Notes
Chemical mapping of a 177-nucleotide RNA with 2A3 and DMS. The reactions ran in a buffer of 150 mM KOAc, 10 mM MgCl2 and 150 mM bicine (pH 8.5), at 24 C. The DMS profile rests on 1,603 reads. Values cover nucleotides 27 to 126. DMS adducts were read by reverse transcription with MarathonRT.
[RMDB]
RNA sequence: GGGAACGACUCGAGUAGAGUCGAAAACAAUAUGAGCAUGGGUUAAGUCUCUUGGUUCAAUGAGGUGUGCUUCUCAAUAAUUCUACAUAACAAGCGGGGUUAAGUCACUUGCCCAAAGAGCUUAGAGGCUGUAAAUGUUGUUCGCAACAUUUACAGCAAAAGAAACAACAACAACAAC
Reactivity to 2A3 in 0.01 (KOAc 150mM, MgCl2 10mM, bicine 150mM(pH8.5), 24C), signal-to-noise 2, nucleotides 027 to 126: c020a040a070u090a160u290g010a050g010c040a060u060g000g110g000u180u200a070a080g060u010c000u000c020u070u050g000g000u070u040c020a060a070u090g010a060g020g000u110g020u040g070c050u030u030c060u000c080a060a060u060a090a000u090u010c020u070a120c050a110u150a250a080c050a110a000g090c060g010g000g000g000u050u120a030a020g000u000c050a040c160u030u090g000c030c000c000a020a090a020g020a020g010c020u090u060a040g010a030g270
Reactivity to DMS in 0.01 (KOAc 150mM, MgCl2 10mM, bicine 150mM(pH8.5), 24C), signal-to-noise 2, nucleotides 027 to 126: c060a100a130u010a120u000g010a050g040c050a110u000g000g010g030u000u010a070a070g000u000c000u000c010u000u000g010g030u000u000c050a090a140u020g000a070g000g020u000g010u000g010c070u010u010c040u000c100a080a130u000a080a140u010u000c040u000a040c080a030u000a070a080c160a100a110g010c140g000g010g000g010u010u010a010a050g020u000c020a030c040u000u000g040c030c000c020a010a070a080g000a170g020c010u010u000a030g020a130g020